[RMDB]
Chemical mapping of a 207-nucleotide RNA with 2A3. For 2A3, 317 sequencing reads were counted. The RNA was probed in 150 mM KOAc, 10 mM MgCl2 and 150 mM bicine (pH 8.5) at 24 C. 2A3 adducts were read by reverse transcription with SuperScript II with manganese.
RNA sequence: GGGAACGACUCGAGUAGAGUCGAAAAGUCAAUAUCACUCUCUAGGAACUGUGUGGAGAAAUGAAAGAGCUUCACUGAACAAAUGAGCUACUAUCAAUACAAAUAAGACAUACAUAGACCAUAAUAUUUCAGUGUCAUGCCAUCAAAAUUACCAUGAAGUACCGAUUACCUUCGGGUAAUCGGUACUAAAAGAAACAACAACAACAAC
Reactivity to 2A3 in 0.01 (KOAc 150mM, MgCl2 10mM, bicine 150mM(pH8.5), 24C), signal-to-noise 1, nucleotides 027 to 156: g030u030c080a000a070u030a060u180c000a030c010u050c000u020c070u180a070g160g000a090a050c040u090g090u090g000u040g150g000a080g020a200a070a030u180g050a170a000a080g010a030g000c010u000u040c040a000c010u010g070a080a020c040a180a200a020u070g010a080g030c070u000a000c040u000a180u080c100a100a070u160a120c030a030a080a010u050a210a000g030a000c000a000u120a010c000a010u090a050g000a000c000c000a000u050a140a060u130a300u110u110u060c040a010g010u000g010u010c050a000u040g010c000c000a010u000c050a000a070a070a000u120u000a000c000c000a040u140g050a140